The record gives the reactivity of an RNA of 177 nucleotides to DMS and 2A3.
For 2A3 the reverse transcriptase was SuperScript II with manganese.
For DMS the reverse transcriptase was MarathonRT.
For DMS, 1,563 sequencing reads were counted.
The 2A3 profile rests on 2,206 reads.
[RMDB]
RNA sequence: GGGAACGACUCGAGUAGAGUCGAAAAUCAUCGACAAGCUCAUCGAAGCCGAGCGGGCCGACCCGAACUUCGCCGAUCGGACCGACGUAUUGGCGUUGAUGCUGCGCAGCACUUACGACGACGGUUCCUUCGAAUGUAGCUUCGGCUACAUUCGAAGAAAAGAAACAACAACAACAAC
Reactivity to DMS in 0.01 (KOAc 150mM, MgCl2 10mM, bicine 150mM(pH8.5), 24C), signal-to-noise 2, nucleotides 027 to 126: u050c130a010u020c020g010a050c130a070a170g000c000u000c090a050u000c090g000a130a090g000c000c030g000a120g020c030g020g030g000c040c030g030a100c050c020c020g000a050a220c120u070u000c020g000c040c010g050a200u000c040g000g020a040c050c020g000a130c110g000u000a130u020u000g000g000c060g070u000u020g000a140u030g000c040u000g020c050g010c050a050g060c110a070c220u050u050a140c090g000a010c060g000a140c050g000g030u030u020c020
Reactivity to 2A3 in 0.01 (KOAc 150mM, MgCl2 10mM, bicine 150mM(pH8.5), 24C), signal-to-noise 3, nucleotides 027 to 126: u120c010a000u040c000g050a030c030a110a070g020c000u000c020a050u050c070g030a030a020g060c020c020g020a010g020c010g000g020g000c030c010g040a090c050c010c000g020a070a050c040u090u040c060g010c030c000g040a050u000c030g040g020a060c030c010g100a160c020g080u110a180u040u080g020g010c040g000u010u070g040a100u050g000c050u060g020c040g000c000a010g050c010a000c070u110u110a020c030g100a000c000g010a000c000g090g000u050u040c000